[RMDB]
RNA sequence: GGGAACGACUCGAGUAGAGUCGAAAAGCACGUCGUUACGACGACGUGCAAGAAAACAAAAGGAGUGGCGAGCUCUGGCCACAGUGAAUCAAACAGAGCAAAAGCAUGGUGGUACGCCACCAUGCAACGUAUAUAGUAGCUUCGGCUACUAUAUACGAAAAGAAACAACAACAACAAC
Reactivity to 2A3 in 0.01 (KOAc 150mM, MgCl2 10mM, bicine 150mM(pH8.5), 24C), signal-to-noise 9, nucleotides 027 to 126: g010c000a000c000g000u010c000g010u020u060a090c300g030a000c000g000a000c000g090u000g000c000a010a000g000a000a070a000a010c140a020a090a050a040g210g060a170g020u000g000g010c030g030a070g000c010u000c000u000g000g000c000c000a010c060a020g140u140g180a030a050u150c070a040a010a030c010a010g000a000g000c020a030a050a020a020g000c000a000u000g000g010u010g010g010u050a030c270g070c030c000a000c000c000a000u000g000c000a000a000
Reactivity to DMS in 0.01 (KOAc 150mM, MgCl2 10mM, bicine 150mM(pH8.5), 24C), signal-to-noise 4, nucleotides 027 to 126: g000c000a000c000g010u000c000g030u000u010a110c170g040a050c020g010a010c020g000u000g030c000a030a020g030a100a080a070a160c150a070a110a140a110g010g010a140g000u000g000g010c010g000a090g000c000u000c010u000g000g000c020c010a030c000a140g020u030g000a120a020u040c150a020a010a070c010a000g010a000g010c010a110a030a080a130g030c000a010u000g000g040u000g020g010u020a060c240g020c020c000a000c010c000a000u000g000c000a010a010

Source information: Chemical mapping of a 177-nucleotide RNA with 2A3 and DMS. For 2A3 the reverse transcriptase was SuperScript II with manganese. Values cover nucleotides 27 to 126. For DMS, 12,237 sequencing reads were counted. DMS adducts were read by reverse transcription with MarathonRT. Conditions: 150 mM KOAc, 10 mM MgCl2 and 150 mM bicine (pH 8.5), 24 C.